[RMDB]
RNA sequence: GGGAACGACUCGAGUAGAGUCGAAAAGAUAUGGAUAGCCACGGGAGUCGUACGUCGGAAACGACGUAUACGACAUCGAUCGUGCGCUAUCCUAAGUCAAACGCAGGAGCCUUCGGGCUCCUGCGAAGGUAUAGAAAGACUUCGGUCUUUCUAUACCAAAAGAAACAACAACAACAAC
Reactivity to 2A3 in 0.01 (KOAc 150mM, MgCl2 10mM, bicine 150mM(pH8.5), 24C), signal-to-noise 2, nucleotides 027 to 126: g000a010u020a000u060g010g010a000u010a000g000c020c000a010c020g010g020g030a100g010u010c020g010u010a010c010g000u000c000g010g000a020a010a000c020g020a000c000g010u000a010u060a000c020g000a000c000a020u240c070g020a030u010c020g000u000g010c060g000c040u000a000u000c000c000u000a000a000g000u000c010a080a070a090c050g000c020a000g030g000a020g010c000c010u190u300c300g220g030g000c010u010c030c010u010g000c000g000a000a000
Reactivity to DMS in 0.01 (KOAc 150mM, MgCl2 10mM, bicine 150mM(pH8.5), 24C), signal-to-noise 2, nucleotides 027 to 126: g000a020u000a030u020g000g000a020u000a010g020c010c000a000c000g000g020g010a050g030u000c000g010u000a000c000g020u000c010g030g010a000a010a030c000g050a010c000g000u000a030u000a070c110g010a020c000a280u010c300g010a040u020c000g020u000g000c240g020c000u000a020u000c000c010u000a000a050g000u000c000a080a120a190c030g000c010a010g000g000a010g020c000c000u010u040c300g050g020g000c000u000c000c000u010g030c010g020a000a020